[RMDB]
RNA sequence: GGGAACGACUCGAGUAGAGUCGAAAAGGGAAGCACUAAGGAUCAGGUUGGGGGCACAGUGUGUCCGAGGAGGAAUCCUCCUGAUAGGAACUGGAAUGUGCCUUGAAGGGGACACCAUGUGUAUAAGCCUAAUAGUUCUCUUCGGAGAACUAUUAGGAAAAGAAACAACAACAACAAC
Reactivity to 2A3 in 0.01 (KOAc 150mM, MgCl2 10mM, bicine 150mM(pH8.5), 24C), signal-to-noise 4, nucleotides 027 to 126: g030g010g000a060a000g030c020a010c070u120a070a080g090g020a070u050c050a010g070g030u130u060g090g000g000g000g020c000a010c000a020g120u080g010u010g030u110c000c020g020a020g000g020a010g010g070a080a110u040c020c000u030c000c000u010g010a050u050a070g010g000a030a030c020u060g030g080a170a110u110g020u020g010c000c000u000u030g020a020a010g080g020g000g000a000c000a010c030c020a080u090g020u000g010u040a050u030a280a030g040
Reactivity to DMS in 0.01 (KOAc 150mM, MgCl2 10mM, bicine 150mM(pH8.5), 24C), signal-to-noise 7, nucleotides 027 to 126: g000g010g000a100a090g000c060a060c080u010a100a090g010g010a090u000c070a050g010g010u010u000g020g010g010g000g020c020a020c020a070g010u010g010u000g000u000c010c030g010a040g000g000a030g010g030a180a200u010c020c010u010c000c000u000g010a150u000a070g010g000a120a030c030u000g010g010a090a120u010g010u000g000c000c010u000u000g010a190a080g000g020g000g000a050c100a040c050c070a060u000g010u000g010u000a100u000a090a130g010